[RMDB]
About this RNA
The record gives the reactivity of an RNA of 177 nucleotides to DMS and 2A3.
RNA sequence: GGGAACGACUCGAGUAGAGUCGAAAACGCUGCACACCAGUCGCAGACGCUAAAAAUAACGCUGCGUCGCGACAGAUGUGUCAACGCGCAAGCUAGCGCAAGCUAUAGCGUUACGUACGAGAAGCGAAUUUAUAUAUAUAUUCGUAUAUAUAUAAAUAAAAGAAACAACAACAACAAC
Reactivity to DMS in 0.01 (KOAc 150mM, MgCl2 10mM, bicine 150mM(pH8.5), 24C), signal-to-noise 2, nucleotides 027 to 126: c010g000c030u010g010c000a010c000a040c050c010a050g030u000c000g000c000a090g020a000c000g000c000u030a000a140a070a130a110u050a140a100c210g010c170u000g000c000g000u000c000g000c000g020a010c000a010g010a050u020g020u000g000u000c080a080a080c160g000c000g020c030a170a110g010c160u020a060g010c020g000c130a070a040g000c080u020a060u030a070g020c000g020u000u000a030c100g010u010a050c080g000a130g000a110a050g000c030g000a200
Reactivity to 2A3 in 0.01 (KOAc 150mM, MgCl2 10mM, bicine 150mM(pH8.5), 24C), signal-to-noise 3, nucleotides 027 to 126: c020g000c020u040g000c000a000c010a010c020c050a040g010u010c000g000c060a090g010a000c000g000c010u090a070a050a060a180a180u220a220a100c090g060c230u110g000c010g000u010c000g000c000g000a000c000a000g020a040u030g000u020g030u030c050a040a030c050g040c010g010c030a010a100g050c030u110a030g010c010g000c040a050a020g030c030u200a120u180a110g010c000g010u010u040a020c040g040u040a010c050g040a030g030a260a010g030c010g030a010
The RNA was probed in 150 mM KOAc, 10 mM MgCl2 and 150 mM bicine (pH 8.5) at 24 C. Reactivities are given for positions 27 through 126.